[RMDB]
RNA sequence: GGGAACGACUCGAGUAGAGUCGAAAAGAAGAGAGGAAGAUUUAGGGGAAGAAGAUAACAAUAUUCACGCGGUCUUCCGAGUUACGUGUGUAGACACCAUGAUUGUUAUCAAAACUAAAUAUGAGAACACCGGAUCAUUAUUCGUAAUGAUCCGGUGAAAAGAAACAACAACAACAAC
Reactivity to 2A3 in 0.01 (KOAc 150mM, MgCl2 10mM, bicine 150mM(pH8.5), 24C), signal-to-noise 4, nucleotides 027 to 126: g080a060a010g080a010g020a000g040g060a060a050g040a070u050u060u060a040g000g000g010g020a010a050g030a080a010g000a050u050a040a000c020a000a080u040a040u050u110c000a000c050g040c000g010g010u030c020u130u070c050c030g000a000g010u040u120a050c050g010u020g000u000g020u090a010g060a090c060a010c080c040a010u180g020a050u040u030g010u010u010a040u060c000a030a000a070a060c050u120a040a070a050u300a080u240g140a110g030a100a000
Reactivity to DMS in 0.01 (KOAc 150mM, MgCl2 10mM, bicine 150mM(pH8.5), 24C), signal-to-noise 5, nucleotides 027 to 126: g010a060a050g000a080g010a070g000g000a050a070g010a050u020u000u010a050g000g010g010g010a080a080g010a090a130g000a020u010a010a020c050a000a040u010a050u030u010c050a040c080g000c090g010g000u020c080u010u020c090c070g010a070g020u050u010a090c110g010u000g020u030g020u010a080g000a060c080a110c080c100a090u010g000a050u000u000g010u000u000a000u000c020a050a080a050a060c100u010a020a060a040u020a070u010g010a130g010a100a170